Chemical mapping of a 207-nucleotide RNA with 2A3 and DMS. The data come from the RNA Mapping Database (RMDB), library OK3TST.
RNA sequence: GGGAACGACUCGAGUAGAGUCGAAAAACACACAUCGUUAUCGCUUGUCUCUUAAAGACUUGCUUUUAUACGCUGCUGAUCCUGCUUUGCAUGUUGCAUCAGCUACAGCAUUGUAUGAUUUACGUACCUGUUGCUUUAGUGUAGCAGCUAUAGCAAGAGCUAAUGACAGAUUCGUCUGUCAUUAGCUAAAAGAAACAACAACAACAAC
Reactivity to 2A3 in 0.01 (KOAc 150mM, MgCl2 10mM, bicine 150mM(pH8.5), 24C), signal-to-noise 9, nucleotides 027 to 156: a000c100a000c020a000c010a110u090c080g050u080u090a090u120c070g010c060u020u020g010u000c010u000c000u090u220a150a160a040g040a040c000u000u020g010c000u050u090u030u060a120u030a030c060g010c020u030g000c030u030g030a070u040c010c010u010g030c040u070u040u060g040c120a260u060g030u040u050g030c030a100u070c100a190g020c010u020a000c010a010g010c030a080u030u080g020u020a030u050g120a170u070u140u200a050c060g020u020a040c010c040u070g040u100u060g030c020u080u090u110a050g010u050g040u090a000g010c010a000g010c010u030a020u070a060g000c010a040a020g030
Reactivity to DMS in 0.01 (KOAc 150mM, MgCl2 10mM, bicine 150mM(pH8.5), 24C), signal-to-noise 2, nucleotides 027 to 156: a070c070a130c090a120c080a080u020c090g020u010u000a060u000c020g000c050u000u000g050u000c000u010c050u000u000a130a100a100g010a140c000u000u010g000c030u000u000u000u000a080u000a010c070g030c030u000g000c040u010g010a180u000c040c030u000g000c050u000u000u010g020c040a110u000g040u020u000g010c020a070u000c090a110g000c020u000a010c020a030g030c000a020u000u000g000u000a040u000g000a230u000u000u010a090c050g030u000a040c080c100u010g020u000u000g020c020u000u000u000a050g010u000g050u000a050g030c030a080g010c020u000a030u000a030g030c020a010a050g010
DMS adducts were read by reverse transcription with MarathonRT. Conditions: 150 mM KOAc, 10 mM MgCl2 and 150 mM bicine (pH 8.5), 24 C. The 2A3 profile rests on 11,124 reads.